[RMDB]
RNA sequence: GGGAACGACUCGAGUAGAGUCGAAAACACCUCAGAUGACAAGGGUAGGUGAGCAUGUUAGUGUACCCUUGGUAAGGGAGGAAGGGGCAGGUAUUUACAUGCUGAGCUCAGUGGGGCGGGGCUAAGACGCUACCUGAUGAUUCGUCAUCAGGUAGCGAAAAGAAACAACAACAACAAC
Reactivity to DMS in 0.01 (KOAc 150mM, MgCl2 10mM, bicine 150mM(pH8.5), 24C), signal-to-noise 1, nucleotides 027 to 126: c070a170c010c020u040c050a170g020a070u000g010a130c030a000a010g000g030g020u000a040g000g010u010g020a110g000c070a070u000g000u000u000a060g040u000g010u000a020c010c000c010u000u000g020g070u050a100a030g000g010g000a100g020g000a080a110g020g000g000g040c110a200g000g000u000a000u000u000u000a050c070a040u000g020c010u000g010a100g020c060u000c080a150g030u000g020g000g040g030c150g020g000g020g000c050u000a030a120g030a160
Reactivity to 2A3 in 0.01 (KOAc 150mM, MgCl2 10mM, bicine 150mM(pH8.5), 24C), signal-to-noise 3, nucleotides 027 to 126: c060a060c000c010u070c040a060g070a140u120g030a030c000a030a000g060g000g020u020a040g040g170u110g050a020g070c040a050u080g000u200u170a110g020u070g090u150a010c010c000c000u010u010g010g030u080a040a020g000g010g040a110g010g050a090a040g010g040g000g000c070a070g090g000u090a100u090u160u060a050c040a010u080g010c000u040g020a020g040c030u020c120a060g030u050g020g010g000g100c040g000g010g000g030c020u030a030a050g060a050
The record gives the reactivity of an RNA of 177 nucleotides to DMS and 2A3. Values are in units of 0.01, from 0 to 300, in steps of 10. The reactions ran in a buffer of 150 mM KOAc, 10 mM MgCl2 and 150 mM bicine (pH 8.5), at 24 C.